[RMDB]
RNA sequence: GGGAACGACUCGAGUAGAGUCGAAAACGCUAUACGCAGCUCUCUGUGGUACAGACACAUUCGCGCGUUCUUUGGACCACACGUUCCAGUUCCAGCUGUGAUACAGAACUCGGAAUCCGAGGAAAGGGUGACAUUUCUCGUGAAUCCUCCCCGAAAACCACUAGCGCAUGUUCGCAUGCGCUAGUGGAAAAGAAACAACAACAACAAC
Reactivity to 2A3 in 0.01 (KOAc 150mM, MgCl2 10mM, bicine 150mM(pH8.5), 24C), signal-to-noise 1, nucleotides 027 to 156: c030g000c010u060a030u080a160c040g040c010a030g000c010u020c010u000c030u030g010u010g070g000u040a060c060a050g080a040c000a000c000a220u190u210c120g000c000g000c080g140u090u010c050u160u120u120g020g000a000c010c000a000c020a010c120g110u110u000c110c040a040g030u110u010c020c040a040g010c060u020g040u050g030a040u000a080c020a020g030a090a090c050u060c130g070g010a080a140u040c010c010g000a000g040g060a000a080a070g120g030g050u070g020a030c040a100u000u050u000c030u000c000g150u180g030a010a060u000c000c000u040c000c020c020c000g040a040a010a000a000
The data come from the RNA Mapping Database (RMDB), library OK3TST. The record gives the reactivity of an RNA of 207 nucleotides to 2A3. Values cover nucleotides 27 to 156.